[RMDB]
RNA sequence: GGGAACGACUCGAGUAGAGUCGAAAAGUAGUUAUGCUGAAAAUCGUUGAGGUUGUAUGGAAUAGGUUAACCGUAAGACCUUAAGUUGAAAAACUUUAAUAUUAAUCUCAGGUAAAUUACUUUGAGUAAAACCUUCGUCGUUUCGACGACGAAGGAACGUACUAGUGCGAUUCGUCGCACUAGUACGAAAAGAAACAACAACAACAAC
Reactivity to 2A3 in 0.01 (KOAc 150mM, MgCl2 10mM, bicine 150mM(pH8.5), 24C), signal-to-noise 1, nucleotides 027 to 156: g000u020a010g010u060u020a140u300g080c060u010g070a150a090a060a100u170c100g060u050u060g030a000g010g010u000u000g020u050a050u040g040g050a100a100u060a130g010g050u030u140a050a010c030c000g000u050a090a060g030a020c000c000u000u040a020a020g000u000u020g000a170a040a000a000a000c020u160u120u060a230a070u130a210u090u260a080a070u030c000u010c020a000g020g090u040a100a160a000u000u060a070c010u120u160u180g080a070g070u110a000a070a030a020c020c000u000u000c000g000u010c010g000u000u000u080c160g010a000c020g000a020c000g000a020a000g000g020a000a000